[RMDB]
RNA sequence: GGGAACGACUCGAGUAGAGUCGAAAAGCGACCCUCAGCACAAGAAGACUUACCAAGUCCUCCGGCGGGGCGUCGCGAUCGACCCAACCGCUGAGAUACUCUUCAUGACGUACGGGCAUGGACGUAAGUCCAGAGAAAGAUUCGUCUUUCUCUGGACAAAAGAAACAACAACAACAAC
Reactivity to 2A3 in 0.01 (KOAc 150mM, MgCl2 10mM, bicine 150mM(pH8.5), 24C), signal-to-noise 9, nucleotides 027 to 126: g010c000g010a010c010c010c000u000c040a080g000c030a070c030a230a060g030a030a000g000a010c000u070u120a250c090c110a070a000g000u000c000c000u020c000c010g020g000c000g000g040g000g000c130g010u000c000g000c010g000a030u060c040g060a040c000c000c010a010a040c040c030g050c100u100g050a040g010a170u090a110c030u050c020u100u080c030a040u080g040a030c050g070u180a040c050g090g150g000c020a020u050g020g010a020c040g070u090a110a060
Reactivity to DMS in 0.01 (KOAc 150mM, MgCl2 10mM, bicine 150mM(pH8.5), 24C), signal-to-noise 9, nucleotides 027 to 126: g010c010g010a030c010c010c000u000c010a130g050c020a090c110a110a070g000a030a030g010a020c010u000u000a190c300c290a090a060g010u000c010c020u000c020c100g000g010c030g010g010g000g010c250g010u000c000g010c030g010a050u000c070g000a080c010c000c010a110a080c050c040g000c050u000g010a080g000a090u000a070c050u000c040u000u000c040a060u000g000a050c060g010u010a060c120g010g010g000c020a040u000g000g010a040c200g010u010a060a130
Notes
Chemical mapping of a 177-nucleotide RNA with 2A3 and DMS. Source: RMDB library OK2TST, as collected in RNAgym. The reactions ran in a buffer of 150 mM KOAc, 10 mM MgCl2 and 150 mM bicine (pH 8.5), at 24 C.